[RMDB]
RNA sequence: GGGAACGACUCGAGUAGAGUCGAAAAGGGUCCAGCACGUGGGGUGGUACCCCAGGCCUGGGUCAGACAGGGACAAGGCAGGGGACACAGGACAGAGGGGUCCCCAGCUGCCACCUCACCCACCGCAAACUGUUGCGGGAUUCGUCCCGCAACAGUUAAAAGAAACAACAACAACAAC
Reactivity to DMS in 0.01 (KOAc 150mM, MgCl2 10mM, bicine 150mM(pH8.5), 24C), signal-to-noise 1, nucleotides 027 to 126: g000g010g000u010c020c020a040g030c050a130c120g030u000g000g000g000g010u010g010g060u000a290c010c010c010c090a060g080g000c270c050u000g000g030g030u000c030a090g000a090c170a110g010g000g000a050c060a210a080g000g010c040a100g030g000g010g040a030c030a050c110a080g000g040a070c110a040g000a200g010g000g030g030u000c010c000c010c010a040g000c050u000g000c070c050a010c030c010u000c050a100c010c090c040a040c210c050g000c060a090